[RMDB]
Conditions: 150 mM KOAc, 10 mM MgCl2 and 150 mM bicine (pH 8.5), 24 C. The record gives the reactivity of an RNA of 177 nucleotides to DMS and 2A3. It was measured as part of the RMDB library RFMREP. The DMS profile rests on 1,554 reads.
RNA sequence: GGGAACGACUCGAGUAGAGUCGAAAAGGGGCAUCACCCGGUCGGCGCGGUCGCGGCGCGCCGAGGGCCCGACGCCUGGCGGAGAAUCAGGGUUCGACUCCGGAGAGCGGGCCUGCGAGACGGCCCGGUCUAUCUUGGUGUUCGCACCAAGAUAGACAAAAGAAACAACAACAACAAC
Reactivity to DMS in 0.01 (KOAc 150mM, MgCl2 10mM, bicine 150mM(pH8.5), 24C), signal-to-noise 2, nucleotides 027 to 126: g020g000g000g030c040a130u010c070a150c020c020c000g000g000u000c040g000g000c010g060c020g000g000u010c150g020c030g010g000c020g070c000g040c010c020g020a050g030g000g030c020c030c020g020a050c080g000c160c010u000g030g010c040g000g020a140g010a070a060u000c060a120g000g000g000u000u010c020g020a220c020u010c010c050g000g010a170g010a110g000c000g010g010g010c000c010u010g020c110g000a090g010a090c130g000g010c000c010c010g020
Reactivity to 2A3 in 0.01 (KOAc 150mM, MgCl2 10mM, bicine 150mM(pH8.5), 24C), signal-to-noise 2, nucleotides 027 to 126: g000g020g020g000c040a080u050c060a110c020c030c000g000g080u070c030g030g000c000g010c010g000g190u150c050g010c050g100g050c000g030c000g030c010c020g040a040g010g020g040c000c040c010g020a040c040g020c020c020u040g020g070c030g000g080a020g010a140a120u120c120a130g070g060g050u060u060c040g030a020c030u020c020c030g000g060a130g010a040g050c000g010g000g020c030c000u020g000c060g030a040g010a030c050g020g020c000c000c000g000
Source information
For 2A3, 1,544 sequencing reads were counted. High DMS reactivity at an A or C suggests that its Watson-Crick edge is free. Values cover nucleotides 27 to 126.